[RMDB]
Background: The record gives the reactivity of an RNA of 177 nucleotides to 2A3 and DMS. High DMS reactivity at an A or C suggests that its Watson-Crick edge is free.

RNA sequence: GGGAACGACUCGAGUAGAGUCGAAAAAUAGAGCAAAGAUCGGAGAGGAAGAAAUGGGUAGAGAAAGUAAUAUUAAUGCGAAUUUCCCUGUGGUACUGUUCUCCGCAAUGAUGUUCAAACCACAGGAGCGGGAUUAUAUGUUCGCAUAUAAUCCCGCAAAAGAAACAACAACAACAAC
Reactivity to 2A3 in 0.01 (KOAc 150mM, MgCl2 10mM, bicine 150mM(pH8.5), 24C), signal-to-noise 2, nucleotides 027 to 126: a000u070a030g020a010g040c020a140a010a000g140a070u170c010g050g020a040g010a020g080g070a040a030g030a030a140a020u090g000g000g000u040a010g000a000g170a180a040a000g090u110a010a300u090a040u210u120a070a100u180g070c030g000a110a140u040u080u070c040c030c000u000g000u000g000g000u040a070c000u000g160u020u000c040u000c020c010g020c070a090a100u120g000a000u130g000u020u080c010a120a060a060c000c000a000c040a070g000g000a010
Reactivity to DMS in 0.01 (KOAc 150mM, MgCl2 10mM, bicine 150mM(pH8.5), 24C), signal-to-noise 1, nucleotides 027 to 126: a020u050a130g000a030g070c030a070a120a110g000a070u000c010g010g000a040g000a070g010g010a040a030g000a020a020a030u020g010g000g000u000a030g000a040g060a060a090a130g010u020a020a030u020a160u010u070a050a020u010g030c100g000a090a240u010u020u010c030c000c000u000g010u010g020g000u000a040c090u020g000u000u000c060u000c030c060g010c180a040a070u020g000a070u000g000u000u010c040a060a050a070c020c020a080c010a040g010g000a070